[RMDB]
RNA sequence: GGGAACGACUCGAGUAGAGUCGAAAAGAUAUGGAUCAUCUCCCAUGGUCGAAGAACAGGAAUCGGAAACGAUUCCUGGGAGACCAGGGAGAGUGAUCCUAAGUCAAAGCGUGCCUUCGGGCACGCAUCAGUGUACCUUGUUCGCAAGGUACACUGAAAAAGAAACAACAACAACAAC
Reactivity to DMS in 0.01 (KOAc 150mM, MgCl2 10mM, bicine 150mM(pH8.5), 24C), signal-to-noise 3, nucleotides 027 to 126: g030a110u010a300u010g000g000a000u000c000a130u000c010u000c010c000c010a140u010g030g030u000c010g000a110a210g000a190a190c000a010g000g000a020a000u000c000g010g010a160a130a200c000g040a020u000u000c000c000u000g000g010g000a120g010a000c010c000a020g000g010g010a010g000a010g000u000g010a020u000c020c000u000a020a120g000u000c040a100a150a150g010c010g040u000g000c000c000u010u000c230g020g020g030c000a000c000g000c000a010
Reactivity to 2A3 in 0.01 (KOAc 150mM, MgCl2 10mM, bicine 150mM(pH8.5), 24C), signal-to-noise 2, nucleotides 027 to 126: g060a020u090a030u160g000g010a010u010c000a000u000c020u050c030c020c060a300u060g000g000u010c010g110a300a060g000a100a030c000a000g000g020a010a010u000c010g010g030a060a030a090c010g000a010u020u000c000c000u000g000g010g000a040g000a000c000c000a000g040g010g010a010g020a000g010u020g010a020u000c000c000u000a110a020g050u020c050a130a130a010g000c000g000u000g010c010c000u090u140c300g040g000g000c000a010c000g000c000a000